[RMDB]
Chemical mapping of a 177-nucleotide RNA with 2A3 and DMS. Source: RMDB library TTRDES, as collected in RNAgym. High DMS reactivity at an A or C suggests that its Watson-Crick edge is free. 2A3 adducts were read by reverse transcription with SuperScript II with manganese. For DMS the reverse transcriptase was MarathonRT. For DMS, 6,116 sequencing reads were counted. Reactivities are rounded to 0.1 and cut off at 0 and 3.
RNA sequence: GGGAACGACUCGAGUAGAGUCGAAAAGAUAUGGAAGGAGUAGGGAGAAACAUUCGGAAACGAAUGAAUUUCGAAGAACUACCCUUCCUAAGUCAAAGCGUCCAACUAGGUUCGCCUAGUUGGACGCCCUAAUUUCCUAGUUCGCUAGGAAAUUAGGAAAAGAAACAACAACAACAAC
Reactivity to 2A3 in 0.01 (KOAc 150mM, MgCl2 10mM, bicine 150mM(pH8.5), 24C), signal-to-noise 4, nucleotides 027 to 126: g000a000u010a010u050g000g010a010a010g010g010a210g040u000a010g050g020g010a050g020a010a020a010c010a020u000u010c000g020g000a000a020a000c010g010a010a010u020g010a090a160u040u020u010c090g120a300a040g000a030a000c000u010a010c000c000c000u000u000c000c000u000a000a000g000u000c030a100a180a150g000c010g010u000c000c000a000a000c010u000a000g100g040u080u080c300g140c080c010u010a010g010u010u000g000g000a000c010g010c000
Reactivity to DMS in 0.01 (KOAc 150mM, MgCl2 10mM, bicine 150mM(pH8.5), 24C), signal-to-noise 4, nucleotides 027 to 126: g010a020u000a040u010g000g000a020a010g010g000a160g000u000a000g010g020g010a030g000a010a030a100c010a010u000u000c000g020g000a010a000a040c000g000a010a010u000g000a110a300u000u000u000c010g000a110a170g020a220a220c000u000a000c010c000c000u000u010c010c000u000a000a050g000u000c000a100a140a200g010c010g010u000c000c000a010a000c010u010a010g000g000u000u000c300g010c000c000u000a000g010u000u010g000g000a000c000g000c000